[RMDB]
RNA sequence: GGGAACGACUCGAGUAGAGUCGAAAAAGAAAUAAUCGUGAGAAGACCUCGGCCUGGCAACUUCAAGACAGCCGUCCCUGGUUAUAUCUGUCAAGGUAUGCAAUGGACAUCGACAUGCAACGAGAUGACACGUCCUUUAAUUCGUUAAAGGACGUGUAAAAGAAACAACAACAACAAC
Reactivity to DMS in 0.01 (KOAc 150mM, MgCl2 10mM, bicine 150mM(pH8.5), 24C), signal-to-noise 5, nucleotides 027 to 126: a060g000a040a070a100u020a040a090u010c060g020u020g020a090g020a120a090g000a100c040c010u000c120g010g000c020c030u000g010g020c030a070a090c080u030u000c090a060a090g020a080c120a100g010c040c030g000u000c020c010c030u000g010g010u020u000a020u010a030u000c030u010g010u030c130a110a040g000g000u010a010u000g020c050a090a050u010g000g020a080c100a070u010c040g010a040c080a050u010g030c090a100a070c110g010a070g010a120u030g000
Reactivity to 2A3 in 0.01 (KOAc 150mM, MgCl2 10mM, bicine 150mM(pH8.5), 24C), signal-to-noise 6, nucleotides 027 to 126: a010g140a010a040a010u230a030a070u090c040g040u100g070a080g020a170a050g060a110c010c000u000c000g030g000c020c010u060g060g000c040a110a060c020u130u100c050a090a060g100a080c020a030g010c010c020g050u050c000c000c000u010g010g000u050u050a080u010a040u110c010u020g170u090c060a090a050g070g000u080a030u070g010c040a060a060u100g050g040a040c020a060u080c060g050a030c010a040u030g030c020a070a030c030g020a020g010a140u150g030